[RMDB]
RNA sequence: GGGAACGACUCGAGUAGAGUCGAAAAAAUCCAGCUUGUAAGAAUGGGUUCAUCUUGGACGGUUUCCCAAGAACCAUUCCUCAGGCUGAAAAAUUGGACCAAAUGUUGAAAGAACAAGGAACUCCUAAUUACUAAUUUUAUUCGUAAAAUUAGUAAUAAAAGAAACAACAACAACAAC
Reactivity to DMS in 0.01 (KOAc 150mM, MgCl2 10mM, bicine 150mM(pH8.5), 24C), signal-to-noise 2, nucleotides 027 to 126: a060a090u000c110c000a040g020c020u000u010g020u000a100a040g020a010a010u000g010g000g020u020u030c190a120u000c020u010u010g000g020a120c220g010g020u010u020u000c180c010c010a000a040g010a050a170c000c000a000u000u000c020c040u000c010a010g010g010c010u000g010a000a040a020a070a160u000u010g010g000a220c010c000a050a110a130u010g000u000u000g010a140a090a120g010a020a000c030a040a160g010g010a050a160c180u000c020c010u010a130

Record summary:
This 177-nucleotide RNA was probed chemically with DMS. High DMS reactivity at an A or C suggests that its Watson-Crick edge is free. The DMS profile rests on 1,039 reads. Conditions: 150 mM KOAc, 10 mM MgCl2 and 150 mM bicine (pH 8.5), 24 C.